Chemical mapping of a 177-nucleotide RNA with 2A3 and DMS. The 2A3 profile rests on 1,781 reads. The RNA was probed in 150 mM KOAc, 10 mM MgCl2 and 150 mM bicine (pH 8.5) at 24 C. High 2A3 reactivity points to a flexible backbone, as in loops and unpaired stretches. 2A3 adducts were read by reverse transcription with SuperScript II with manganese. Values are in units of 0.01, from 0 to 300, in steps of 10.

[RMDB]
RNA sequence: GGGAACGACUCGAGUAGAGUCGAAAACUGCGAUGUGGCAGAGCAUCAAGGAUGUGGCCUCGGCGACUUGGGAUUGGCUGAAGGACGCAUUCUUCAGCUUUAGCCCGCUCGGCCUGGUGAUCAAGAAACAUCCGUAGAGGUUCGCCUCUACGGAUGUAAAAGAAACAACAACAACAAC
Reactivity to 2A3 in 0.01 (KOAc 150mM, MgCl2 10mM, bicine 150mM(pH8.5), 24C), signal-to-noise 2, nucleotides 027 to 126: c040u060g000c050g070a160u070g040u170g080g020c020a020g010a030g010c020a080u090c030a040a010g040g000a020u020g010u040g050g000c000c000u050c040g010g000c050g020a130c030u180u260g160g000g090a160u110u110g130g000c000u020g020a090a030g000g010a010c050g000c140a070u010u020c000u000u010c000a010g000c000u020u060u090a010g000c010c010c040g040c020u010c000g070g020c030c010u010g060g050u090g060a110u110c100a100a030g020a070a210
Reactivity to DMS in 0.01 (KOAc 150mM, MgCl2 10mM, bicine 150mM(pH8.5), 24C), signal-to-noise 3, nucleotides 027 to 126: c030u000g000c100g010a050u010g020u000g010g000c040a050g000a060g010c030a080u010c180a070a080g000g010a060u010g020u000g000g000c010c020u010c090g000g010c010g010a040c100u010u000g020g010g020a140u000u010g010g020c000u000g000a070a030g000g010a050c300g000c060a060u010u000c000u000u000c110a040g020c000u000u010u010a130g020c020c000c020g020c200u000c040g020g000c020c000u010g000g010u000g020a090u000c090a080a130g000a130a110